[RMDB]
RNA sequence: GGGAACGACUCGAGUAGAGUCGAAAAGAUAUGGAAGGUAUGGAGAUACAAUCGGAAACGAUUGAAUAUCGUUGAAAUACUUCCUAAGUCAAACGCGUUUGGCUUUCUUCGGAAAGCCAAACGCGAAGAAUGCUACAAAGUUCGCUUUGUAGCAUUCAAAAGAAACAACAACAACAAC
Reactivity to DMS in 0.01 (KOAc 150mM, MgCl2 10mM, bicine 150mM(pH8.5), 24C), signal-to-noise 1, nucleotides 027 to 126: g010a020u000a050u010g000g000a010a050g010g010u000a000u000g010g000a000g020a020u000a060c020a000a000u000c020g020g000a030a010a020c010g030a000u000u000g010a170a100u010a010u000c010g000u000u010g000a140a150a020u010a020c010u000u000c000c010u000a000a140g000u000c000a070a110a150c000g000c000g010u000u000u000g020g050c000u000u000u000c000u000u010c220g020g010a050a000a000g030c000c000a020a000a000c010g050c000g000a010a030
Source information: Structure probing data (DMS) for a 177-nucleotide construct. The reactions ran in a buffer of 150 mM KOAc, 10 mM MgCl2 and 150 mM bicine (pH 8.5), at 24 C. For DMS the reverse transcriptase was MarathonRT. Values cover nucleotides 27 to 126. For DMS, 1,978 sequencing reads were counted. It was measured as part of the RMDB library TTRDEL.